RNA sequence: GGGAACGACUCGAGUAGAGUCGAAAACUUAAGAGCUAGUUAGGCGUCAGGUAAGAGAUAAUGCAUGGCUUCCAAGCUACAAAAUGCAUCAAAGAAGCCCGAACCAAGGAAAGCAAUCCACAGAGCACUAUCCAAUGGGAUUCGUCCCAUUGGAUAGAAAAGAAACAACAACAACAAC
Reactivity to 2A3 in 0.01 (KOAc 150mM, MgCl2 10mM, bicine 150mM(pH8.5), 24C), signal-to-noise 2, nucleotides 027 to 126: c030u090u070a110a010g010a010g070c010u020a000g070u170u050a080g070g000c010g040u050c020a010g070g070u070a110a020g040a000g000a150u060a200a000u130g020c030a030u060g040g040c050u110u000c020c080a060a010g020c030u000a030c040a020a080a000a020u100g000c000a030u020c120a070a130a170g050a020a040g040c020c040c000g030a020a010c000c020a030a020g030g050a080a040a000g030c010a010a040u060c000c020a030c010a020g090a010g050c010a020
Reactivity to DMS in 0.01 (KOAc 150mM, MgCl2 10mM, bicine 150mM(pH8.5), 24C), signal-to-noise 3, nucleotides 027 to 126: c060u000u020a050a110g000a080g020c030u000a100g010u000u010a050g030g000c100g040u000c030a060g030g010u010a080a090g000a130g000a100u000a090a050u000g000c030a040u000g000g030c000u000u010c210c160a110a110g000c020u000a120c140a050a070a120a050u000g010c010a040u000c130a070a100a120g000a090a090g020c010c010c050g000a070a050c070c080a050a050g000g000a070a050a120g010c100a100a040u000c030c070a040c090a070g000a120g010c110a170

Chemical mapping of a 177-nucleotide RNA with 2A3 and DMS. Values cover nucleotides 27 to 126. For 2A3 the reverse transcriptase was SuperScript II with manganese. The 2A3 profile rests on 1,891 reads. The reactions ran in a buffer of 150 mM KOAc, 10 mM MgCl2 and 150 mM bicine (pH 8.5), at 24 C. It was measured as part of the RMDB library OK2TRN. DMS adducts were read by reverse transcription with MarathonRT.